The data come from the RNA Mapping Database (RMDB), library OK3TST. Structure probing data (2A3 and DMS) for a 207-nucleotide construct. The RNA was probed in 150 mM KOAc, 10 mM MgCl2 and 150 mM bicine (pH 8.5) at 24 C. Reactivities are given for positions 27 through 156. 2A3 adducts were read by reverse transcription with SuperScript II with manganese.
RNA sequence: GGGAACGACUCGAGUAGAGUCGAAAAGAUCGUUCGUUCACGAGUACGUGUACGAUCGUUCGAGAGUGUGAUCACACACACACACUCACACGUGAUCGUUCGAACGUGAGAUCGAUCGAUCUCGUGUGUGAGAGUGUUCGAGUGAUCGAGAGAUCGAGUAACAGAAGCGAUUCGUCGCUUCUGUUACAAAAGAAACAACAACAACAAC
Reactivity to 2A3 in 0.01 (KOAc 150mM, MgCl2 10mM, bicine 150mM(pH8.5), 24C), signal-to-noise 7, nucleotides 027 to 156: g020a020u020c000g000u010u010c010g000u030u060c010a000c010g070a160g260u300a180c070g000u010g010u020a000c000g000a010u020c020g000u030u030c040g010a050g000a030g120u140g020u150g070a010u010c000a010c000a010c000a000c000a000c000a000c010a080c000u020c000a000c000a010c000g010u020g000a000u000c010g010u010u000c010g010a090a080c100g140u280g090a160g020a100u010c000g000a000u010c000g000a010u010c020u010c020g040u050g000u000g010u020g000a050g010a000g030u010g040u100u120c100g020a020g060u020g000a010u010c030g000a010g000a000g000a050u130c150g020a030
Reactivity to DMS in 0.01 (KOAc 150mM, MgCl2 10mM, bicine 150mM(pH8.5), 24C), signal-to-noise 3, nucleotides 027 to 156: g010a000u000c020g020u000u000c000g040u000u000c000a010c030g010a300g030u000a090c060g070u000g000u000a020c010g020a040u000c010g040u000u000c030g010a130g010a140g020u010g040u000g020a040u000c010a060c020a110c090a150c050a070c010a030c010a030c020u000c000a060c010a050c000g030u020g010a040u000c010g020u000u000c000g000a050a240c050g000u000g010a260g000a160u000c000g010a030u010c020g020a000u000c000u010c030g040u000g010u000g010u000g020a090g000a160g020u000g020u000u000c040g020a260g010u000g000a040u000c000g010a200g000a160g020a110u000c030g000a300